[RMDB]
Chemical mapping of a 177-nucleotide RNA with 2A3 and DMS.
For DMS, 2,580 sequencing reads were counted.
The 2A3 profile rests on 5,293 reads.
The data come from the RNA Mapping Database (RMDB), library TTRDES.
RNA sequence: GGGAACGACUCGAGUAGAGUCGAAAAGAUAUGGAAUUCGUAGACAUGCGUGACGGUCGGAAACGACCGGAGCGCAACAGCUACAGAAUUCCUAAGUCAAAACGAUUGUACCUUCGGGUACAAUCGAGUAUUUGAUUGACUUCGGUCAAUCAAAUACAAAAGAAACAACAACAACAAC
Reactivity to 2A3 in 0.01 (KOAc 150mM, MgCl2 10mM, bicine 150mM(pH8.5), 24C), signal-to-noise 2, nucleotides 027 to 126: g010a010u020a020u080g010g000a000a020u000u020c010g000u010a000g040a090c160a300u300g050c010g020u030g010a060c000g040g030u000c010g000g000a010a020a000c000g000a000c000c000g000g000a010g000c020g010c010a010a000c030a000g000c000u010a000c120a070g000a000a000u000u000c000c000u000a050a010g030u020c040a030a000a110a140c030g010a020u010u010g000u000a000c000c000u060u130c300g160g000g000u010a000c010a000a020u010c000g000a000
Reactivity to DMS in 0.01 (KOAc 150mM, MgCl2 10mM, bicine 150mM(pH8.5), 24C), signal-to-noise 3, nucleotides 027 to 126: g000a030u010a180u000g000g000a020a000u000u000c000g000u000a010g000a010c070a300u010g030c000g010u000g010a300c000g010g000u000c010g020g000a020a040a090c000g000a000c000c000g010g010a230g010c010g010c000a030a040c230a110g000c000u000a000c030a160g020a020a010u000u000c000c000u000a000a070g000u000c010a100a060a120a290c030g000a010u000u000g000u000a000c000c000u000u000c230g040g000g010u000a000c000a000a000u000c000g020a080